RNA sequence: GGGAACGACUCGAGUAGAGUCGAAAAGGCACAUCAAAAGGUGACAGUGAUCCACGGCGUCAACCAGCUCUUGCGAGAUCGGGCAGAGAUCGUGACGAAACUCCUUGCUUUUGACAAGGGCGGCAAGAACAAUCCCUCUGUUCGCAGAGGGAUUGUUAAAAGAAACAACAACAACAAC
Reactivity to 2A3 in 0.01 (KOAc 150mM, MgCl2 10mM, bicine 150mM(pH8.5), 24C), signal-to-noise 1, nucleotides 027 to 126: g010g020c010a050c010a070u120c030a060a140a020a070g000g000u010g050a030c010a100g020u040g060a130u020c050c000a020c070g050g000c050g040u000c040a040a060c020c000a020g010c020u000c000u040u110g010c050g050a090g030a150u090c060g070g030g090c060a050g010a020g000a110u090c060g000u070g000a050c090g000a080a030a020c030u060c040c000u000u050g000c020u150u110u140u300g060a180c000a050a050g000g000g060c000g000g000c030a040a010g090
Reactivity to DMS in 0.01 (KOAc 150mM, MgCl2 10mM, bicine 150mM(pH8.5), 24C), signal-to-noise 1, nucleotides 027 to 126: g000g030c030a040c080a030u010c170a060a050a110a090g000g040u040g010a030c030a100g050u000g030a110u010c060c100a090c080g000g010c070g000u000c080a070a050c050c000a050g030c030u000c000u000u020g010c050g030a060g030a100u010c100g010g000g030c100a080g030a080g000a130u000c070g030u000g010a110c100g000a010a070a040c120u000c000c000u000u000g000c070u000u010u000u010g020a120c010a040a050g000g000g000c070g010g020c100a080a100g010
Record summary:
An RNA of 177 nucleotides, treated with 2A3 and DMS and read out base by base. Reactivities are given for positions 27 through 126. The data come from the RNA Mapping Database (RMDB), library OK2TRN. The RNA was probed in 150 mM KOAc, 10 mM MgCl2 and 150 mM bicine (pH 8.5) at 24 C. The DMS profile rests on 991 reads.